[RMDB]
Chemical mapping of a 207-nucleotide RNA with 2A3. Source: RMDB library OK3TST, as collected in RNAgym. The reactions ran in a buffer of 150 mM KOAc, 10 mM MgCl2 and 150 mM bicine (pH 8.5), at 24 C.
RNA sequence: GGGAACGACUCGAGUAGAGUCGAAAAGACUUUUACACAAUGUGUUUGAUCCACUUUGAGUUAAUUUUUGCAUGUGGGGUGAAAUAAGGGUCCUAUUUUAUUUUACUUUCUGCAUCUAGCUAUCUGGUUGUACCAACAUCAUUUGUUAAAAAGACUACACAGUUAUUUCGUUCGCGAAAUAACUGUGAAAAGAAACAACAACAACAAC
Reactivity to 2A3 in 0.01 (KOAc 150mM, MgCl2 10mM, bicine 150mM(pH8.5), 24C), signal-to-noise 1, nucleotides 027 to 156: g080a080c030u120u150u080u170a030c020a000c000a040a100u040g000u020g030u030u050u130g040a030u080c000c000a000c040u050u030u190g000a010g010u110u160a000a160u130u120u200u180u120g050c050a030u010g000u040g020g100g020g000u030g030a050a090a120u010a000a080g010g030g050u130c020c000u040a060u050u030u020u000a030u030u010u020u020a030c000u080u160u090c030u000g000c000a030u020c040u040a000g060c010u030a150u110c010u030g070g000u000u040g040u010a040c000c010a000a080c000a010u160c000a030u040u030u110g000u020u020a040a040a070a000a000g110a050c010u120a030